[RMDB]
RNA sequence: GGGAACGACUCGAGUAGAGUCGAAAAUUCAGGGUCGAAAUCGGUAUUUUUGCUGGCGGGAUGCUGGCCAUUCUAACGCCGACGAGCGGCCUGCCUUCAAGGCCUUUCAUCGACUUUUUCCUUAAGAGCUUAAAUAUUGCUUCGGCAAUAUUUAAGCAAAAGAAACAACAACAACAAC
Reactivity to DMS in 0.01 (KOAc 150mM, MgCl2 10mM, bicine 150mM(pH8.5), 24C), signal-to-noise 2, nucleotides 027 to 126: u010u000c130a080g010g000g000u000c000g030a030a300a070u000c050g000g030u000a040u000u010u020u020u030g000c080u000g010g000c000g000g040g020a200u030g010c010u000g000g020c010c140a040u000u010c180u010a090a120c170g010c070c030g020a030c060g000a040g020c150g020g010c000c000u000g000c100c060u000u000c080a030a040g010g010c000c000u000u000u010c100a240u000c030g000a030c020u000u000u000u000u000c000c020u000u000a090a080g000a220
Reactivity to 2A3 in 0.01 (KOAc 150mM, MgCl2 10mM, bicine 150mM(pH8.5), 24C), signal-to-noise 1, nucleotides 027 to 126: u150u090c050a030g010g000g020u010c000g000a040a010a040u000c010g000g000u040a150u080u150u020u100u110g010c010u020g000g020c010g020g150g050a050u210g020c010u040g050g000c010c020a010u110u080c050u080a100a040c110g000c000c010g050a070c050g010a030g010c010g010g030c000c000u000g000c000c040u030u080c060a040a010g020g010c010c000u020u060u040c030a060u000c010g000a000c000u010u040u030u000u010c030c000u050u070a130a070g060a030